[RMDB]
RNA sequence: GGGAACGACUCGAGUAGAGUCGAAAAGAUAUGGACGUGAGUGGGUAUUUGUACAAACUAUUCGGAAACGAACGAAUUUGUACUUCCCACCACGUCCUAAGUCAAAAGCUACUGUUCGCAGUAGCAAGAAUACUCGGAUGUUCGCAUCCGAGUAUUCAAAAGAAACAACAACAACAAC
Reactivity to DMS in 0.01 (KOAc 150mM, MgCl2 10mM, bicine 150mM(pH8.5), 24C), signal-to-noise 2, nucleotides 027 to 126: g000a060u020a300u000g010g000a000c000g020u000g010a160g050u000g000g000g010u010a060u010u000u000g010u000a000c000a010a000a010c080u010a300u010u000c000g020g010a060a140a200c010g000a020a020c170g000a120a060u000u000u010g000u000a000c000u020u000c000c000c000a000c000c000a000c000g010u000c000c000u000a000a100g000u000c030a120a060a080a110g010c000u000a010c020u000g000u000u010c190g050c000a020g000u010a000g000c000a050a010
Reactivity to 2A3 in 0.01 (KOAc 150mM, MgCl2 10mM, bicine 150mM(pH8.5), 24C), signal-to-noise 2, nucleotides 027 to 126: g040a000u070a060u140g000g010a000c010g000u010g070a200g060u020g060g070g040u170a300u190u300u200g020u000a020c010a000a020a020c050u100a100u040u010c000g030g060a090a110a100c050g020a060a000c030g060a190a300u020u010u000g000u000a000c020u060u030c000c000c000a000c000c000a000c010g000u000c000c010u010a000a000g000u000c020a000a000a000a100g000c000u000a000c010u000g060u070u090c280g000c100a010g000u000a000g000c000a000a010
The record gives the reactivity of an RNA of 177 nucleotides to DMS and 2A3. It was measured as part of the RMDB library TTRDEL. The 2A3 profile rests on 3,420 reads. The reactions ran in a buffer of 150 mM KOAc, 10 mM MgCl2 and 150 mM bicine (pH 8.5), at 24 C. DMS adducts were read by reverse transcription with MarathonRT.